[RMDB]
Source information: An RNA of 177 nucleotides, treated with 2A3 and DMS and read out base by base. For 2A3 the reverse transcriptase was SuperScript II with manganese.
RNA sequence: GGGAACGACUCGAGUAGAGUCGAAAACAGUUCGCGCAUCUGCUGUUCGCCGAUCACGCGGGUGAUAACCUUUUUGCUGUAGCUGUCGGCCAACUGGCGCGCCUGUGACGCCAGGUAGGCGGCGUUACGGCUACAACGUAUUCGUACGUUGUAGCCGAAAAGAAACAACAACAACAAC
Reactivity to 2A3 in 0.01 (KOAc 150mM, MgCl2 10mM, bicine 150mM(pH8.5), 24C), signal-to-noise 4, nucleotides 027 to 126: c000a020g030u110u140c030g000c000g000c010a040u040c030u090g040c010u060g070u130u090c070g000c000c010g010a030u060c040a010c060g050c030g020g000g040u050g050a100u100a130a110c020c020u030u040u030u150u260g090c090u070g050u060a040g010c080u140g020u030c030g120g030c020c000a040a040c010u010g010g000c020g000c000g040c040c040u190g050u120g030a020c000g000c000c010a000g030g010u100a050g060g040c000g000g020c000g010u020u030a000
Reactivity to DMS in 0.01 (KOAc 150mM, MgCl2 10mM, bicine 150mM(pH8.5), 24C), signal-to-noise 2, nucleotides 027 to 126: c110a150g000u010u010c060g010c020g030c300a100u000c050u000g020c000u000g000u000u000c210g000c020c040g020a060u000c100a090c060g010c030g010g000g000u010g010a130u020a100a080c060c030u000u020u020u000u000g010c040u020g030u000a020g020c010u010g020u000c000g010g000c000c010a070a100c020u000g000g000c020g000c070g000c190c080u010g000u010g020a130c000g000c000c000a030g000g000u040a080g010g030c010g000g000c020g000u000u000a020

The RNA was probed in 150 mM KOAc, 10 mM MgCl2 and 150 mM bicine (pH 8.5) at 24 C. DMS adducts were read by reverse transcription with MarathonRT. It was measured as part of the RMDB libraries RFM100 and RFMREP.